[RMDB]
RNA sequence: GGGAACGACUCGAGUAGAGUCGAAAACCGGAGCCAUUGUGGCUCAGGCCGGUUGCGCCUGCCCUCGGGCCCCCACGGAGGCGGGGGUUCCAGGGCACGAGUUCGAGGCCAGCCUGGUCCACAUGGGAUUCACCCCACCCUUCGGGGUGGGGUGAAUAAAAGAAACAACAACAACAAC
Reactivity to 2A3 in 0.01 (KOAc 150mM, MgCl2 10mM, bicine 150mM(pH8.5), 24C), signal-to-noise 1, nucleotides 027 to 126: c000c000g050g090a030g070c010c000a040u140u240g040u000g000g000c000u010c000a000g000g000c000c000g060g020u040u070g050c040g010c000c010u000g000c010c000c000u000c040g000g000g000c000c000c000c020c030a040c060g300g110a170g090g170c090g010g000g000g000g000u080u080c000c040a030g000g000g000c000a000c030g070a100g000u100u300c070g020a020g020g020c000c000a000g020c000c010u000g020g060u010c000c000a000c000a000u000g000g030g010